[RMDB]
RNA sequence: GGGAACGACUCGAGUAGAGUCGAAAAGAAAAUAGCGUAAUGGACAUUGAGAAUGUACGCUAAGUGUGUGUUGUAUAAAUAACGUCCAAAUGAACACACACACAGUUGGACCUAAUGUCCAAAAAAACUUACUUCUCAUGUUCGCAUGAGAAGUAAGAAAAGAAACAACAACAACAAC
Reactivity to DMS in 0.01 (KOAc 150mM, MgCl2 10mM, bicine 150mM(pH8.5), 24C), signal-to-noise 3, nucleotides 027 to 126: g000a050a070a080a120u000a040g010c010g000u000a010a060u000g020g030a020c000a030u010u000g010a100g000a100a100u000g000u000a000c010g000c000u010a030a100g000u000g020u000g000u000g010u000u020g030u000a130u000a060a040a090u000a090a270c110g010u010c050c020a020a040a060u000g010a040a010c020a000c000a010c000a000c000a020c040a070g010u000u000g000g000a050c020c070u010a120a030u010g010u010c000c010a000a000a050a030a040a040a080
Reactivity to 2A3 in 0.01 (KOAc 150mM, MgCl2 10mM, bicine 150mM(pH8.5), 24C), signal-to-noise 2, nucleotides 027 to 126: g150a000a110a010a050u080a020g000c010g010u030a030a040u070g010g030a010c020a010u050u110g050a020g050a170a130u190g010u050a010c000g010c010u030a100a080g000u000g000u010g010u000g010u050u070g050u070a110u080a260a190a100u140a080a020c070g050u000c030c040a000a060a020u140g030a070a000c000a000c000a000c000a000c000a010c010a020g090u110u070g030g000a010c000c000u000a060a000u030g000u000c000c000a110a000a060a000a000a000a000